[RMDB]
RNA sequence: GGGAACGACUCGAGUAGAGUCGAAAAGCAGCUGCCAGCAGCCGAGGGGAUUAAACACGGGGCCACCGGCAGAGGUUGGCAACAACGCACGUCAACCCCGGGUCAGAGGCAGUGCGACAGCGAUGGGAUUCACUCGAGCCGCCCCAGUAGGGAAGGGGACCAGUUGAAAGUUCGCUUUCAACUGGUCAAAAGAAACAACAACAACAAC
Reactivity to 2A3 in 0.01 (KOAc 150mM, MgCl2 10mM, bicine 150mM(pH8.5), 24C), signal-to-noise 3, nucleotides 027 to 156: g010c020a010g040c000u000g010c000c000a000g000c000a000g010c000c030g030a280g070g010g000g020a050u150u270a110a080a030c050a010c040g000g000g040g000c010c000a020c020c020g190g000c130a050g070a090g120g000u180u150g020g000c010a040a060c050a070a020c040g060c060a080c060g020u000c050a070a060c000c000c000c000g010g000g020u160c000a010g020a020g010g000c000a010g000u020g030c040g040a080c090a060g020c030g050a070u150g110g100g010a010u000u020c020a000c010u000c000g010a000g000c010c000g010c000c010c000c000a030g040u150a050g040g030g050a090a050g020g010g030
The record gives the reactivity of an RNA of 207 nucleotides to 2A3. For 2A3 the reverse transcriptase was SuperScript II with manganese. The reactions ran in a buffer of 150 mM KOAc, 10 mM MgCl2 and 150 mM bicine (pH 8.5), at 24 C. Source: RMDB library ARCHII, as collected in RNAgym.